Record summary: The record gives the reactivity of an RNA of 177 nucleotides to DMS and 2A3. DMS adducts were read by reverse transcription with MarathonRT. Source: RMDB library OK1LIB, as collected in RNAgym. Values cover nucleotides 27 to 126.
RNA sequence: GGGAACGACUCGAGUAGAGUCGAAAACUCGAAAGAGACCUGCAUAUCUUAGGCAGAUGAACAAGUCACGUCUGAAAAGCGAAAGCCCUAAGAUAUGCAGCUGUUAAGACUUGAAGCAGAAAAUAAAACCAUACUGGGAUUUCGAUCCCAGUAUGGUAAAAGAAACAACAACAACAAC
Reactivity to DMS in 0.01 (KOAc 150mM, MgCl2 10mM, bicine 150mM(pH8.5), 24C), signal-to-noise 2, nucleotides 027 to 126: c030u000c010g000a060a050a140g000a000g000a180c210c010u000g000c000a000u000a050u000c000u010u000a000g020g020c010a030g000a000u010g000a120a080c030a000a040g000u030c010a300c000g000u010c000u020g000a130a250a120a080g050c010g000a130a060a180g000c000c020c000u000a010a000g000a010u000a000u000g000c000a000g020c020u010g000u000u030a010a070g000a040c020u010u010g020a150a060g000c000a050g000a160a030a220a090u030a110a070a160
Reactivity to 2A3 in 0.01 (KOAc 150mM, MgCl2 10mM, bicine 150mM(pH8.5), 24C), signal-to-noise 4, nucleotides 027 to 126: c000u000c000g020a040a050a010g070a010g030a080c010c000u000g000c000a010u000a000u010c000u000u000a000g010g000c000a000g010a010u000g000a060a050c000a010a000g000u020c010a000c070g020u000c000u010g110a210a220a080a020g010c020g030a070a050a010g000c000c000c000u000a000a000g010a000u000a000u000g000c000a010g000c000u000g010u030u050a050a060g000a000c010u000u010g010a030a000g020c040a020g070a080a130a040a010u220a050a110a030